The record gives the reactivity of an RNA of 177 nucleotides to 2A3 and DMS. The RNA was probed in 150 mM KOAc, 10 mM MgCl2 and 150 mM bicine (pH 8.5) at 24 C. For 2A3 the reverse transcriptase was SuperScript II with manganese. Reactivities are given for positions 27 through 126. It was measured as part of the RMDB library RFMREP.
RNA sequence: GGGAACGACUCGAGUAGAGUCGAAAAGCCCCUGGCGUGGGGCGUCGAGGCGCCGCCACGGCCGCUGUGAAAACGCCCCCUCCAAGGGGCGCACAAAAACCCUUUGAAGGCUUCGGCCUUCAAAGGGCAUACCUUGAUUGUUCGCAAUCAAGGUAUGAAAAGAAACAACAACAACAAC
Reactivity to 2A3 in 0.01 (KOAc 150mM, MgCl2 10mM, bicine 150mM(pH8.5), 24C), signal-to-noise 2, nucleotides 027 to 126: g000c020c000c000c000u010g000g000c010g130u200g010g010g010g020c010g010u000c030g070a160g010g000c000g000c030c020g110c150c090a090c090g010g000c080c050g020c030u040g070u080g150a060a090a010a000c010g010c000c000c000c020c000u000c000c010a040a040g020g020g000g000c010g010c000a050c070a010a170a060a050a040c000c000c000u000u000u010g000a000a000g020g000c000u050u160c270g100g000c000c000u020u010c020a000a000a000g000g000g000
Reactivity to DMS in 0.01 (KOAc 150mM, MgCl2 10mM, bicine 150mM(pH8.5), 24C), signal-to-noise 3, nucleotides 027 to 126: g000c010c010c010c020u000g000g020c040g000u020g040g000g010g020c010g010u000c030g000a210g010g000c020g000c030c020g010c160c120a040c090g010g020c080c030g020c090u010g000u020g000a080a050a100a100c020g010c000c000c000c010c010u020c080c080a080a070g000g000g020g030c010g000c090a040c100a070a080a080a100a150c000c000c000u000u000u000g000a000a010g020g000c000u010u010c200g030g010c000c000u000u000c010a000a000a020g000g000g010